[RMDB]
RNA sequence: GGGAACGACUCGAGUAGAGUCGAAAAGAUAUGGAAACGUGAGUUCUUUGAUCGUACGGUAUCGGAAACGAUAUUACGGGAGAACUCUUCCUAAGUCAAAAGAAGAGUGUCUUCGGACACUCUUCAACGAUAAGAUAACGUUCGCGUUAUCUUAUCGAAAAGAAACAACAACAACAAC
Reactivity to DMS in 0.01 (KOAc 150mM, MgCl2 10mM, bicine 150mM(pH8.5), 24C), signal-to-noise 9, nucleotides 027 to 126: g000a070u000a300u010g000g000a030a050a120c280g010u010g010a010g010u000u000c000u000u000u010g000a120u010c000g010u010a030c300g020g010u000a000u000c010g000g000a110a070a200c010g010a010u000a000u000u000a020c000g010g000g000a010g000a000a010c010u000c000u000u000c000c000u000a030a140g000u000c070a060a080a140a110g000a010a000g000a020g010u000g000u000c000u000u010c210g020g000a000c000a000c000u000c000u000u000c000a030a070
Reactivity to 2A3 in 0.01 (KOAc 150mM, MgCl2 10mM, bicine 150mM(pH8.5), 24C), signal-to-noise 8, nucleotides 027 to 126: g020a030u110a040u170g030g050a080a120a040c280g180u130g100a010g010u010u000c010u140u180u150g150a230u180c010g010u020a050c160g160g020u010a000u010c000g000g040a100a040a030c010g000a000u000a000u010u050a010c010g010g020g000a010g000a010a000c000u000c000u010u000c010c000u030a150a040g090u050c040a060a050a050a190g010a010a000g010a000g010u010g000u000c020u030u110c230g070g000a000c000a000c000u010c000u000u000c000a000a000